[RMDB]
RNA sequence: GGGAACGACUCGAGUAGAGUCGAAAAACCAGGCUGCCGUGAAAGCGCAAGCCAAUGCGCUUACCGUUGAGGUUGGCAGCGAGCAGUAUCAUACCACAGGGUAGGGAUACUGCGGGAUCCGCCGGGUAUACCGGCAAAAAAGAGCCCUUCGGGGCUCCUACCAUUAUCGAUUCGUCGAUAAUGGUAGAAAAGAAACAACAACAACAAC
Reactivity to 2A3 in 0.01 (KOAc 150mM, MgCl2 10mM, bicine 150mM(pH8.5), 24C), signal-to-noise 2, nucleotides 027 to 156: a000c000c000a010g000g000c000u000g000c000c020g020u000g010a010a000a010g000c000g000c010a000a010g010c010c000a010a050u010g000c020g000c030u000u020a100c000c000g060u130u290g100a140g090g000u010u010g000g020c000a000g000c000g000a010g000c000a000g010u000a000u000c000a000u010a010c010c010a110c150a300g280g020g000u000a000g020g000g000a000u000a000c000u000g000c000g000g020g000a090u090c090c040g000c000c000g000g000g070u200a120u110a270c010c030g000g000c050a120a000a020a000a000a000g000a000g000c000c000c000u000u050c120g070g010g000g010c000u000c000
Reactivity to DMS in 0.01 (KOAc 150mM, MgCl2 10mM, bicine 150mM(pH8.5), 24C), signal-to-noise 1, nucleotides 027 to 156: a170c030c010a170g010g000c000u010g020c000c060g000u020g030a000a030a020g130c010g000c020a010a050g070c300c300a300a200u000g000c020g010c000u020u000a050c010c000g000u020u020g010a140g020g020u000u000g020g010c060a010g060c010g020a070g010c000a000g060u010a000u020c000a030u000a050c000c000a250c300a250g040g020g040u000a010g020g010g000a020u000a020c000u000g020c000g000g010g000a100u000c120c050g040c000c000g050g010g010u050a160u000a160c010c000g030g030c010a040a000a030a030a020a110g010a030g030c000c000c000u020u010c300g040g030g000g030c000u010c010